Structure probing data (2A3 and DMS) for a 207-nucleotide construct.
Values are in units of 0.01, from 0 to 300, in steps of 10.
For 2A3, 1,053 sequencing reads were counted.
Source: RMDB library PDB130, as collected in RNAgym.
For 2A3 the reverse transcriptase was SuperScript II with manganese.
RNA sequence: GGGAACGACUCGAGUAGAGUCGAAAAUCCGAAGUUUCCCUCAGGAUAGCUGGAGCAGUAUUCUAGUUCCAUCUUGUAAAGACAAUGAUUAGCAGUUUCGGGGGCGUAAUGCUCUCAGCUGAUUCUCAAACUCUGAACGGGUGGGUAUCAUUUUAAUACAUAUUUAUUUGUUCGCAAAUAAAUAUGUAAAAGAAACAACAACAACAAC
Reactivity to 2A3 in 0.01 (KOAc 150mM, MgCl2 10mM, bicine 150mM(pH8.5), 24C), signal-to-noise 2, nucleotides 027 to 156: u010c010c000g010a080a000g020u040u080u010c020c030c000u030c050a030g060g030a120u050a090g040c030u030g030g030a060g000c040a030g120u120a110u130u030c030u090a040g030u110u000c000c000a020u020c010u110u300g020u070a080a040a000g020a010c020a040a080u030g000a010u000u030a010g000c010a000g020u000u130u300c140g000g000g000g040g010c010g050u160a140a120u300g000c000u000c000u000c010a000g010c000u000g010a030u020u010c020u000c010a000a060a030c010u040c010u040g010a010a010c020g000g030g000u010g000g030g010u110a060u120c020a030u030u220u170u260a080a070u070
Reactivity to DMS in 0.01 (KOAc 150mM, MgCl2 10mM, bicine 150mM(pH8.5), 24C), signal-to-noise 1, nucleotides 027 to 156: u000c020c040g010a130a300g010u000u000u010c000c000c000u000c010a100g000g000a090u010a030g010c020u020g000g030a060g030c060a140g030u000a070u000u000c020u000a080g010u000u000c020c030a060u000c040u010u010g050u010a090a300a050g000a050c010a070a300u000g030a040u000u000a020g010c020a070g000u000u010u000c120g060g010g000g020g000c000g010u000a120a110u020g000c010u000c000u000c010a080g010c020u000g010a050u000u000c000u000c030a040a070a270c220u000c020u010g000a300a050c010g000g000g050u000g000g010g020u000a030u010c020a090u000u000u000u000a010a300u010
The reactions ran in a buffer of 150 mM KOAc, 10 mM MgCl2 and 150 mM bicine (pH 8.5), at 24 C. DMS adducts were read by reverse transcription with MarathonRT.